About this RNA
Chemical mapping of a 177-nucleotide RNA with 2A3.
RNA sequence: GGGAACGACUCGAGUAGAGUCGAAAAUUAUACAGCAACAUCUAUUUAUGCUUUAUCCUUUUGAAUUAGAACCUCGGGAAGUAGAUGUUUGGGUAAACGCAUACUAUAAAUGGGCGAAUGCAAUGUAGUAUGAGGUGGACUUCGGUCCACCUCAUACAAAAGAAACAACAACAACAAC
Reactivity to 2A3 in 0.01 (KOAc 150mM, MgCl2 10mM, bicine 150mM(pH8.5), 24C), signal-to-noise 1, nucleotides 027 to 126: u070u060a010u020a060c040a000g000c000a000a150c010a080u000c000u170a010u000u090u000a060u010g070c000u130u000u000a000u000c000c000u000u210u000u010g060a090a080u210u000a190g120a100a000c010c010u060c090g100g150g050a200a160g200u070a090g010a090u080g040u020u100u250g000g000g030u060a000a000a070c070g000c000a000u000a040c000u060a090u000a040a040a170u000g030g110g000c000g130a150a000u160g050c070a000a070u110g000u040a040
Values cover nucleotides 27 to 126.